Structure probing data (2A3) for a 207-nucleotide construct. It was measured as part of the RMDB library OK3TST. Conditions: 150 mM KOAc, 10 mM MgCl2 and 150 mM bicine (pH 8.5), 24 C.

RNA sequence: GGGAACGACUCGAGUAGAGUCGAAAAGACGGCGCUCGUGAUGGCACUGGGACGCAAUGCUGAUUUGCGUAAACAGGUCGAGGACGCUUACAAUAACGAUCACAUUGCGCUGGGCUAUCUUAUCCGCGAUAUUGAAAGCCGAGCGGGAUCCGCACCGUCCAUGUGUGCCAUUCGUGGCACACAUGGAAAAAGAAACAACAACAACAAC
Reactivity to 2A3 in 0.01 (KOAc 150mM, MgCl2 10mM, bicine 150mM(pH8.5), 24C), signal-to-noise 2, nucleotides 027 to 156: g020a020c020g040g000c030g000c000u020c000g060u060g020a080u070g030g070c110a090c300u060g060g000g050a010c010g000c000a000a000u090g000c080u070g060a070u000u040u130g060c020g020u030a010a050a020c100a090g110g100u080c060g080a080g090g040a030c030g000c010u030u170a030c020a030a260u100a190a000c030g010a000u000c000a010c000a070u000u080g000c010g000c040u050g030g030g000c020u060a040u090c030u100u290a100u110c120c070g000c050g050a060u070a060u100u190g090a090a020a000g000c000c000g000a000g000c000g040g030g010a100u000c000c020g050c000a030c000c050g030